Chemical mapping of a 177-nucleotide RNA with DMS and 2A3. For DMS the reverse transcriptase was MarathonRT.

RNA sequence: GGGAACGACUCGAGUAGAGUCGAAAAUGAAUGCUGGCCAAGCAUUGGCGACAAAGACCUCAAGUAAACGGACCGAAAGUGGGUCAGACAGAGAAUGUUGCAUAACCAUCAAAUACACAACUCGCUGCCUCCAGGACAGAUUCGUCUGUCCUGGAGGAAAAGAAACAACAACAACAAC
Reactivity to DMS in 0.01 (KOAc 150mM, MgCl2 10mM, bicine 150mM(pH8.5), 24C), signal-to-noise 1, nucleotides 027 to 126: u000g000a070a000u000g000c000u000g000g000c080c080a090a140g010c040a080u000u010g010g020c010g000a000c020a080a000a090g010a130c130c050u000c170a050a100g000u000a000a200a090c180g000g010a040c050c050g000a010a100a140g020u000g020g030g050u000c060a100g020a030c100a030g000a060g080a130a160u000g010u000u020g000c030a080u000a130a060c080c100a060u000c000a000a040a040u000a030c150a050c070a060a050c060u000c000g000c060u000g000
Reactivity to 2A3 in 0.01 (KOAc 150mM, MgCl2 10mM, bicine 150mM(pH8.5), 24C), signal-to-noise 1, nucleotides 027 to 126: u210g060a020a010u030g000c000u020g080g090c050c080a040a030g000c000a130u070u030g020g020c000g020a010c080a000a130a000g090a080c000c000u050c060a120a000g010u060a020a100a140c050g050g000a030c030c030g020a160a200a000g160u230g130g070g090u000c000a040g010a020c020a010g050a000g010a150a100u030g020u060u060g140c020a040u050a110a010c030c000a020u040c080a050a080a130u170a060c070a000c010a080a200c030u080c020g080c080u020g030